[RMDB]
RNA sequence: GGGAACGACUCGAGUAGAGUCGAAAAGAUAUGGACCGAUGCACGCUUGGAUUUAGCGUCUAUCAUUUGCAUCGGAAACGAUGCAAAUGCCGAGGACGCUUGUCAGCGUGUAAAUCGGUCCUAAGUCGAUACGCGUCAAGUUCGCUUGACGCGUAUCAAAAGAAACAACAACAACAAC
Reactivity to DMS in 0.01 (KOAc 150mM, MgCl2 10mM, bicine 150mM(pH8.5), 24C), signal-to-noise 1, nucleotides 027 to 126: g020a060u010a300u000g000g010a010c000c000g040a020u010g000c000a010c020g010c000u030u010g040g000a050u020u000u000a010g030c010g030u000c000u020a230u020c010a010u000u010u000g010c000a010u000c000g000g010a090a060a100c000g000a040u000g000c020a000a000a000u000g000c290c290g000a140g000g000a020c000g040c010u000u000g020u000c020a010g020c010g020u000g010u030a020a080a090u000c000g000g010u000c000c000u000a010a050g000u010c070
Reactivity to 2A3 in 0.01 (KOAc 150mM, MgCl2 10mM, bicine 150mM(pH8.5), 24C), signal-to-noise 3, nucleotides 027 to 126: g060a030u150a080u300g010g010a000c000c000g020a000u030g030c010a000c000g040c040u190u300g270g010a120u300u300u220a000g010c000g010u000c010u050a160u050c000a020u000u000u040g000c000a010u000c020g000g060a030a020a010c020g020a000u000g000c010a020a000a000u030g000c080c140g260a280g210g000a000c000g040c030u010u020g000u000c000a010g000c000g030u000g000u020a000a000a000u020c010g010g000u030c000c000u010a000a000g010u000c070